[RMDB]
RNA sequence: GGGAACGACUCGAGUAGAGUCGAAAAAAAGACGCAGUUGCCGAUCGGUAUGGAUGCCACCGUGACGGCUCAAUCACACAAGUGCCAACGAUAACGAGGCGCUCGCUAUUGCUGCGUAACUGACGGCUAGAUACAGCCAGGUUCGCCUGGCUGUAAAUGUAUCAUAGCAGUUCGCUGCUAUGAUACAAAAAGAAACAACAACAACAAC
Reactivity to DMS in 0.01 (KOAc 150mM, MgCl2 10mM, bicine 150mM(pH8.5), 24C), signal-to-noise 3, nucleotides 027 to 156: a050a060a050g020a050c050g000c010a090g000u000u000g020c020c010g000a120u000c010g000g020u000a120u010g020g020a120u020g000c030c040a070c020c040g030u000g000a240c120g020g040c010u000c050a090a090u000c100a110c110a070c050a080a050g060u010g010c020c000a060a070c060g000a100u010a060a140c070g010a220g010g020c050g020c030u000c040g110c020u000a060u000u010g010c000u010g000c020g040u000a050a090c050u000g000a100c060g010g020c080u020a080g000a300u010a030c020a030g020c020c000a010g020g010u010u010c300g030c000c000u000g020g010c010u000g000u000a000a010a070
Reactivity to 2A3 in 0.01 (KOAc 150mM, MgCl2 10mM, bicine 150mM(pH8.5), 24C), signal-to-noise 4, nucleotides 027 to 156: a000a000a020g090a000c010g000c000a010g010u100u060g040c000c020g020a040u020c010g000g010u070a070u150g160g030a100u120g060c010c010a010c000c000g020u040g100a100c040g000g020c000u030c010a050a060u090c020a030c010a010c000a110a000g010u010g000c010c000a120a070c120g110a190u180a290a090c100g020a100g010g010c000g010c030u050c040g060c050u100a040u050u180g000c010u000g000c010g010u000a070a050c030u030g030a020c030g060g010c020u020a030g010a120u060a060c000a010g000c000c000a000g010g030u030u050c120g030c050c000u040g010g010c000u000g010u000a000a000a000
An RNA of 207 nucleotides, treated with DMS and 2A3 and read out base by base.
The reactions ran in a buffer of 150 mM KOAc, 10 mM MgCl2 and 150 mM bicine (pH 8.5), at 24 C.
2A3 adducts were read by reverse transcription with SuperScript II with manganese.
The DMS profile rests on 5,177 reads.
For DMS the reverse transcriptase was MarathonRT.
The 2A3 profile rests on 2,415 reads.